[RMDB]
RNA sequence: GGGAACGACUCGAGUAGAGUCGAAAACAUGACUUAACUGGCAACCCCGUGCUCAACAUCCCCAUGGACGCGAGGCUUGCCAAGGCUGCAGGUGUGGAUGUGACUGGAGGUCAGUAUUGGCUUGACCAUUAUGCUGCAUCUUCGGAUGCAGCAUAAUAAAAGAAACAACAACAACAAC
Reactivity to 2A3 in 0.01 (KOAc 150mM, MgCl2 10mM, bicine 150mM(pH8.5), 24C), signal-to-noise 2, nucleotides 027 to 126: c050a060u160g070a000c020u090u080a170a000c020u050g020g000c000a000a050c000c000c000c000g000u000g030c030u020c040a050a090c030a150u050c000c000c000c000a050u080g030g000a050c000g000c020g080a080g050g000c070u040u050g000c000c000a000a030g000g020c030u050g020c010a050g010g030u080g040u080g050g030a040u020g020u010g090a020c020u010g020g010a000g040g020u030c000a030g010u040a120u100u130g050g000c000u000u080g060a020c000c000
Reactivity to DMS in 0.01 (KOAc 150mM, MgCl2 10mM, bicine 150mM(pH8.5), 24C), signal-to-noise 3, nucleotides 027 to 126: c060a090u010g000a070c100u020u000a090a140c110u010g000g000c000a020a040c070c020c020c000g020u020g000c020u000c020a030a070c140a120u000c000c000c010c050a190u020g020g000a080c020g010c060g030a100g010g000c240u000u000g000c030c020a030a060g020g020c040u000g010c020a070g000g020u010g030u010g000g010a060u020g000u010g000a160c080u000g000g020a080g000g010u000c030a010g010u010a090u010u000g010g000c030u030u000g010a080c020c030